The record gives the reactivity of an RNA of 177 nucleotides to 2A3 and DMS.
[RMDB]
RNA sequence: GGGAACGACUCGAGUAGAGUCGAAAAAAGCGGCUGGAGGCAGGAGGCUAGCGGAUUGGGGGGAAGAAAAGCCGAAAUGGAUUCCCGGGUUCAUGGAUGGAAGAGAAGGGAGUUUCGAAUUCCUGCAUAGUCCAUCUAUCUUCGGAUAGAUGGACUAAAAAGAAACAACAACAACAAC
Reactivity to 2A3 in 0.01 (KOAc 150mM, MgCl2 10mM, bicine 150mM(pH8.5), 24C), signal-to-noise 2, nucleotides 027 to 126: a000a000g090c040g060g000c090u080g010g110a070g020g020c010a000g020g000a010g000g000c050u000a010g080c030g050g010a080u050u060g000g060g000g020g000g000a030a000g040a000a040a080a020g030c020c000g010a010a140a080u150g070g000a040u050u000c010c000c000g010g010g020u000u020c020a020u010g080g030a030u140g020g090a070a020g040a060g000a120a000g030g000g000a000g030u060u040u050c010g040a060a050u020u050c000c000u000g040c010a000
Reactivity to DMS in 0.01 (KOAc 150mM, MgCl2 10mM, bicine 150mM(pH8.5), 24C), signal-to-noise 2, nucleotides 027 to 126: a040a040g000c020g000g010c080u010g010g000a060g000g000c080a080g000g010a100g010g000c060u020a070g020c050g000g000a090u020u000g000g010g010g000g010g000a050a080g010a070a060a100a050g020c040c040g030a070a070a060u010g010g010a110u010u000c000c000c020g000g000g010u020u000c100a080u020g010g020a040u010g000g010a050a080g000a050g000a110a070g000g000g010a070g010u010u000u010c060g010a100a140u020u000c000c000u000g020c120a170
DMS adducts were read by reverse transcription with MarathonRT. The data come from the RNA Mapping Database (RMDB), library RFM100.